The record gives the reactivity of an RNA of 177 nucleotides to DMS and 2A3. Values cover nucleotides 27 to 126. The RNA was probed in 150 mM KOAc, 10 mM MgCl2 and 150 mM bicine (pH 8.5) at 24 C.
RNA sequence: GGGAACGACUCGAGUAGAGUCGAAAAACGCACCGUUACGACGGUGCGACCCCGUGAUGGCAUGGAUCUUUGAGACCUGAGAAUUUUCUUCCUUGAUGAAAAUCACAAGUACGAUCCCUGAGGGCAACCUUCCCCCACAAUUCGUUGUGGGGGAAGGAAAAGAAACAACAACAACAAC
Reactivity to DMS in 0.01 (KOAc 150mM, MgCl2 10mM, bicine 150mM(pH8.5), 24C), signal-to-noise 2, nucleotides 027 to 126: a120c000g000c000a020c010c010g000u000u000a130c180g020a060c010g000g010u000g010c000g000a020c060c000c000c050g010u030g000a140u030g000g000c050a060u000g000g010a060u000c020u000u010u020g020a120g000a050c030c000u010g000a100g010a080a040u000u000u030u000c020u000u020c030c130u010u060g010a090u010g000a010a000a030a050u020c010a100c100a020a080g010u010a110c040g000a050u000c010c010c050u000g010a080g020g020g000c140a070a130
Reactivity to 2A3 in 0.01 (KOAc 150mM, MgCl2 10mM, bicine 150mM(pH8.5), 24C), signal-to-noise 4, nucleotides 027 to 126: a010c010g000c000a000c010c010g010u010u060a150c290g020a000c000g030g000u010g000c000g000a020c000c000c000c000g020u100g050a090u080g030g040c050a020u030g010g040a030u010c050u130u100u160g130a130g020a090c020c030u070g030a050g070a210a180u080u010u060u060c040u050u020c020c060u060u130g010a060u050g030a120a080a040a050u040c000a020c000a090a050g030u080a050c070g050a040u000c000c000c020u020g040a090g030g010g010c030a040a030